Source information
The record gives the reactivity of an RNA of 207 nucleotides to DMS and 2A3. The data come from the RNA Mapping Database (RMDB), library M2RFPK. The RNA was probed in 150 mM KOAc, 10 mM MgCl2 and 150 mM bicine (pH 8.5) at 24 C.
RNA sequence: GGGAACGACUCGAGUAGAGUCGAAAAGAACUUUGGCCGGCUCGGAAUAGAAUCAGGGGGUGCAAACUGCCCACUGGCAGAAAGGAUUAUAGCAAAUGCGUACCCUACUGCAAUACAGCCCGGCCAACAUAGACUACUCUAUUCGUAGAGUAGUCAACUCAACAAUUAUAUUCGUAUAAUUGUUGAGAAAAGAAACAACAACAACAAC
Reactivity to DMS in 0.01 (KOAc 150mM, MgCl2 10mM, bicine 150mM(pH8.5), 24C), signal-to-noise 2, nucleotides 027 to 156: g000a090a160c050u000u000u000g010g020c020c000g010g020c050u010c050g040g010a150a120u020a130g010a170a150u010c030a080g000g000g010g000g000u000g040c040a080a110a110c080u000g020c020c000c080a070c110u010g020g050c010a050g020a150a110a140g020g000a140u000u000a140u000a180g020c050a060a060a140u000g000c110g020u010a080c030c000c000u000a150c000u000g010c050a070a150u000a260c030a050g010c000c010c050g060g020c010c010a010a000c070a080u000a130g000a050c000u000a000c000u000c000u000a100u000u000c230g030u000a010g000a030g030u000a030g020u000c000a030a090
Reactivity to 2A3 in 0.01 (KOAc 150mM, MgCl2 10mM, bicine 150mM(pH8.5), 24C), signal-to-noise 6, nucleotides 027 to 156: g020a060a020c020u060u000u040g000g000c010c010g010g010c010u040c100g040g050a150a070u170a190g080a100a100u250c000a020g000g000g000g010g000u000g000c020a060a060a100c010u010g000c010c030c060a130c210u190g010g000c010a010g060a050a090a020g120g040a050u170u120a100u230a180g050c040a070a120a080u150g030c030g020u030a020c000c000c000u160a300c000u040g010c040a030a050u050a120c020a020g020c000c060c030g000g000c000c000a000a000c000a000u040a020g000a000c000u000a000c000u000c000u010a040u040u050c110g060u050a000g000a000g000u000a000g000u000c010a000a000